[RMDB]
RNA sequence: GGGAACGACUCGAGUAGAGUCGAAAACAAAUACCGUUCGCGGUAUUUGAAAUACGGAAACCUUCGUGCCGUCAGAAGUUAAGAGGUGCUUCCUCUCGUUAAAAAUCAGCUGAUUCGUCAGCUGAAAACUGAUACAGAUCUUCGGAUCUGUAUCAGUAAAAGAAACAACAACAACAAC
Reactivity to DMS in 0.01 (KOAc 150mM, MgCl2 10mM, bicine 150mM(pH8.5), 24C), signal-to-noise 3, nucleotides 027 to 126: c010a000a000a000u000a010c000c010g020u000u020c210g040c010g020g000u010a000u000u020u000g000a060a080a100u000a110c150g020g000a040a050a040c050c020u000u000c030g020u000g010c030c030g000u000c210a150g000a100a090g010u000u000a080a080g010a040g000g010u010g010c130u000u000c000c010u000c020u000c060g020u010u000a010a050a060a110a090u000c000a010g000c000u000g000a030u000u000c170g010u010c000a010g010c010u000g000a000a020a050
Reactivity to 2A3 in 0.01 (KOAc 150mM, MgCl2 10mM, bicine 150mM(pH8.5), 24C), signal-to-noise 2, nucleotides 027 to 126: c000a000a000a000u000a000c000c020g000u010u050c240g030c010g080g030u010a000u010u010u010g000a010a010a010u220a020c070g040g000a050a050a060c010c000u080u110c020g040u060g050c030c000g060u060c040a050g010a160a020g130u130u160a140a040g020a010g050g020u060g110c080u100u060c000c000u000c010u020c030g070u080u100a060a080a050a030a050u040c010a000g000c010u000g000a030u030u060c070g060u020c080a000g000c000u000g000a000a000a000